The data come from the RNA Mapping Database (RMDB), library OK1LIB. An RNA of 177 nucleotides, treated with 2A3 and read out base by base. For 2A3, 392 sequencing reads were counted.
RNA sequence: GGGAACGACUCGAGUAGAGUCGAAAACUCCGACGCCGGCUUCCGCUCCUUGACCCCAACAUCGAGCAGCCGCCACGGAACGCGACUGGCCCCAAAGUACACUGGCAUCGUCUGCAGCGCGAAUAGGUACUCCGAGGACCUUCGGGUCCUCGGAGUAAAAAGAAACAACAACAACAAC
Reactivity to 2A3 in 0.01 (KOAc 150mM, MgCl2 10mM, bicine 150mM(pH8.5), 24C), signal-to-noise 1, nucleotides 027 to 126: c100u030c000c030g040a020c030g020c000c000g000g060c050u060u080c000c000g130c000u040c010c000u030u100g080a160c000c000c010c000a000a080c060a130u220c040g060a000g000c020a040g070c020c000g000c000c000a100c070g070g150a040a060c050g000c000g060a010c000u060g010g000c020c000c000c030a120a120a000g090u080a000c060a000c040u020g100g000c020a000u120c030g120u040c040u000g050c060a010g060c020g070c000g150a030a000u140a210g000g140